[RMDB]
RNA sequence: GGGAACGACUCGAGUAGAGUCGAAAAUCACAGAUCUAUCUUUACUGUCAUAGAAAGAACUAAUAACAUAUUAUUGAACAAAAAUAACAAGUUACAAAACAGCUUGCAGCCACGUUUGUAACAUCAGUAUAUCUAUUUGUGUGUCUAGGUGUGGACACACUCCACGCCAUUUCGAUGGCGUGGAGUGAAAAGAAACAACAACAACAAC
Reactivity to 2A3 in 0.01 (KOAc 150mM, MgCl2 10mM, bicine 150mM(pH8.5), 24C), signal-to-noise 2, nucleotides 027 to 156: u080c010a010c050a010g070a090u020c070u110a090u020c040u100u090u090a130c110u020g140u150c030a050u090a190g060a040a100a040g080a090a050c180u120a090a120u130a170a100c080a000u270a120u300u170a040u080u110g040a140a050c020a050a150a220a090a000u190a120a020c040a220a020g020u000u000a000c010a000a010a010a010c030a010g010c000u120u260g000c140a060g010c060c010a090c190g000u000u000u110g050u000a000a000c030a010u130c020a010g090u030a050u020a000u230c060u030a100u070u210u080g020u010g010u020g000u010c000u010a060g060g070u000g020u100g140g000a000c000a000
The record gives the reactivity of an RNA of 207 nucleotides to 2A3. Values cover nucleotides 27 to 156. The 2A3 profile rests on 456 reads. As a SHAPE reagent, 2A3 marks flexible, mostly unpaired nucleotides at the ribose 2'-OH. For 2A3 the reverse transcriptase was SuperScript II with manganese. Conditions: 150 mM KOAc, 10 mM MgCl2 and 150 mM bicine (pH 8.5), 24 C. It was measured as part of the RMDB library OK3TST.